RNA sequence: GGGAACGACUCGAGUAGAGUCGAAAAGAUAUGGAAACGCUACCCACCUACGAUGGUCGCAGAUAUCGGAAACGAUGUAGACCUAAGUAGAGGCGUUUCCUAAGUCAAAGCACCCUUCGGGGUGCAACUAUAGCUGAUGGUUCGCCAUCAGCUAUAGAAAAGAAACAACAACAACAAC
Reactivity to DMS in 0.01 (KOAc 150mM, MgCl2 10mM, bicine 150mM(pH8.5), 24C), signal-to-noise 6, nucleotides 027 to 126: g000a080u030a170u010g000g010a020a010a010c020g020c010u000a150c010c010c030a300c100c000u000a000c010g000a230u000g000g010u000c000g020c210a130g000a080u000a030u000c000g000g000a080a070a150c010g010a020u000g010u000a100g010a000c010c000u000a140a220g010u000a000g010a060g020g000c000g010u000u000u000c000c000u000a020a090g000u000c130a070a090a130g010c000a000c000c000c000u000u000c190g040g000g020g010u000g010c010a010a030
Reactivity to 2A3 in 0.01 (KOAc 150mM, MgCl2 10mM, bicine 150mM(pH8.5), 24C), signal-to-noise 4, nucleotides 027 to 126: g060a080u220a120u300g000g000a000a010a000c010g020c010u160a300c020c010c010a020c020c000u000a000c010g040a050u260g000g020u000c010g020c170a060g080a300u170a020u130c010g040g000a050a070a050c010g000a010u020g010u080a080g000a010c000c000u010a070a010g010u000a000g000a010g000g000c000g000u000u000u010c000c000u010a030a010g040u040c080a170a080a040g000c000a000c000c010c000u030u070c230g040g000g000g010u000g010c000a000a000
Chemical mapping of a 177-nucleotide RNA with DMS and 2A3. The RNA was probed in 150 mM KOAc, 10 mM MgCl2 and 150 mM bicine (pH 8.5) at 24 C. Source: RMDB library TTRDEL, as collected in RNAgym.